[RMDB]
The record gives the reactivity of an RNA of 177 nucleotides to DMS and 2A3. 2A3 adducts were read by reverse transcription with SuperScript II with manganese.
RNA sequence: GGGAACGACUCGAGUAGAGUCGAAAAAUCGUCGCAUGUACAUGUCUAGACAUGCUAGGCGAUCACUAGGAUCGAUCAUGUCAUGCUGUGAUCAGUACUCAUGGGAUCGAUCCAUGAUCCAUGGGUACUGCCAUCAGGACUUCGGUCCUGAUGGCAGAAAAGAAACAACAACAACAAC
Reactivity to DMS in 0.01 (KOAc 150mM, MgCl2 10mM, bicine 150mM(pH8.5), 24C), signal-to-noise 2, nucleotides 027 to 126: a040u000c020g020u000c180g010c000a000u000g000u020a050c030a060u000g000u010c160u020a050g010a170c200a080u000g020c000u000a020g000g020c030g000a010u000c060a170c190u000a130g010g010a020u000c010g000a070u000c100a050u000g000u000c030a050u000g000c080u000g010u010g000a030u000c020a030g010u000a010c010u000c000a000u010g020g010g020a050u000c000g030a110u020c230c200a020u010g010a030u000c000c000a010u010g000g000g000u000a020
Reactivity to 2A3 in 0.01 (KOAc 150mM, MgCl2 10mM, bicine 150mM(pH8.5), 24C), signal-to-noise 1, nucleotides 027 to 126: a030u050c030g050u020c000g060c010a000u000g030u140a020c010a030u060g080u050c060u060a060g010a080c030a170u150g030c040u030a030g000g070c020g030a030u010c000a060c100u160a090g030g280a010u020c000g030a050u080c050a000u050g070u000c000a000u020g040c040u060g070u070g020a050u080c040a000g050u060a010c020u000c000a020u050g110g140g050a020u010c010g030a060u000c100c000a010u170g010a000u000c000c000a010u030g040g000g030u020a020
Background
The RNA was probed in 150 mM KOAc, 10 mM MgCl2 and 150 mM bicine (pH 8.5) at 24 C. Values cover nucleotides 27 to 126. For DMS the reverse transcriptase was MarathonRT.